Structure probing data (2A3) for a 177-nucleotide construct. The 2A3 profile rests on 283 reads. The data come from the RNA Mapping Database (RMDB), library OK1LIB. For 2A3 the reverse transcriptase was SuperScript II with manganese.
RNA sequence: GGGAACGACUCGAGUAGAGUCGAAAACACAAUUACUUAUUAGGUGGAAAAACGUAUCUCCGCAGCAAUUAUGCUUUGAUAUCACCAAAGAGCUGAACCUACAGUCCAAACGAUUUGAGUGAAAAAGCCGACGAGUUUGAUUCGUCAAACUCGUCGGAAAAGAAACAACAACAACAAC
Reactivity to 2A3 in 0.01 (KOAc 150mM, MgCl2 10mM, bicine 150mM(pH8.5), 24C), signal-to-noise 1, nucleotides 027 to 126: c060a000c000a000a170u300u120a060c180u180u190a190u050u130a290g040g030u020g000g060a040a040a040a040a040c130g000u030a000u020c100u000c000c000g000c000a000g000c020a000a270u250u090a060u300g030c000u040u020u010g080a030u060a260u000c000a050c000c000a000a000a000g080a000g000c050u000g000a070a000c000c000u050a000c050a000g000u100c000c130a080a140a000c000g000a000u000u000u080g110a180g030u150g050a000a000a000a000a100g170